[RMDB]
RNA sequence: GGGAACGACUCGAGUAGAGUCGAAAAGAUAUGGACCAAACGUAUUCAACUGUGCGAAGAACAGAUAGUCAAAUCGGAAACGAUUUGACUAUCUGGGAGCACAGCGCAUUUACGUGGUCCUAAGUCACGAAAUAUAAUCCUUCGGGAUUAUAUUUCGAAAAGAAACAACAACAACAAC
Reactivity to 2A3 in 0.01 (KOAc 150mM, MgCl2 10mM, bicine 150mM(pH8.5), 24C), signal-to-noise 2, nucleotides 027 to 126: g030a030u120a060u190g000g000a000c020c000a300a270a090c020g020u040a030u060u210c090a170a160c050u000g000u020g000c040g300a300a020g000a140a040c000a010g000a010u010a000g000u010c000a000a000a000u000c030g090g000a010a090a100c020g020a010u020u000u000g000a000c000u010a000u000c000u000g000g000g000a010g000c000a000c000a020g000c010g080c020a100u040u050u060a010c010g000u030g010g000u020c020c020u010a150a030g060u040c030a010
Reactivity to DMS in 0.01 (KOAc 150mM, MgCl2 10mM, bicine 150mM(pH8.5), 24C), signal-to-noise 3, nucleotides 027 to 126: g010a050u010a300u000g000g020a020c010c000a060a090a120c030g010u000a010u000u000c300a300a090c000u000g010u000g030c000g020a130a240g000a130a240c010a000g000a000u000a000g020u000c000a000a010a000u000c000g000g000a120a090a250c000g010a000u010u000u000g000a020c000u000a000u000c010u000g020g000g000a100g010c000a010c000a000g010c040g000c220a120u000u000u000a010c010g020u000g010g020u000c010c000u020a020a080g020u010c040a300

This 177-nucleotide RNA was probed chemically with 2A3 and DMS. The RNA was probed in 150 mM KOAc, 10 mM MgCl2 and 150 mM bicine (pH 8.5) at 24 C.